[RMDB]
RNA sequence: GGGAACGACUCGAGUAGAGUCGAAAACACCACAGUGGUUGUGCCCCGGCUUAAGUUGGUCGACCACGUUUUCCCCCGUGCUCUGGACACGACGGUCGUCGUCCCCAGCUGGAUGAAACGGUGGCACCAUGACUGCCCCAUUCGUGGGGCAGUCAUGAAAAGAAACAACAACAACAAC
Reactivity to DMS in 0.01 (KOAc 150mM, MgCl2 10mM, bicine 150mM(pH8.5), 24C), signal-to-noise 1, nucleotides 027 to 126: c150a130c070c040a120c220a090g030u000g020g040u000u000g060u000g030c000c020c070c020g010g020c120u000u010a060a090g020u000u000g000g020u000c040g000a060c080c010a030c080g000u000u000u000u000c000c020c030c280c000g020u010g010c050u000c040u000g000g000a170c100a030c010g000a080c130g000g000u000c090g000u000c120g000u000c010c060c000c020a070g000c020u010g000g010a090u010g000a050a070a080c050g000g010u020g010g030c060a060c060
Chemical mapping of a 177-nucleotide RNA with DMS.
The RNA was probed in 150 mM KOAc, 10 mM MgCl2 and 150 mM bicine (pH 8.5) at 24 C.
Values are in units of 0.01, from 0 to 300, in steps of 10.
The data come from the RNA Mapping Database (RMDB), library OK2TST.
For DMS, 1,116 sequencing reads were counted.
Reactivities are given for positions 27 through 126.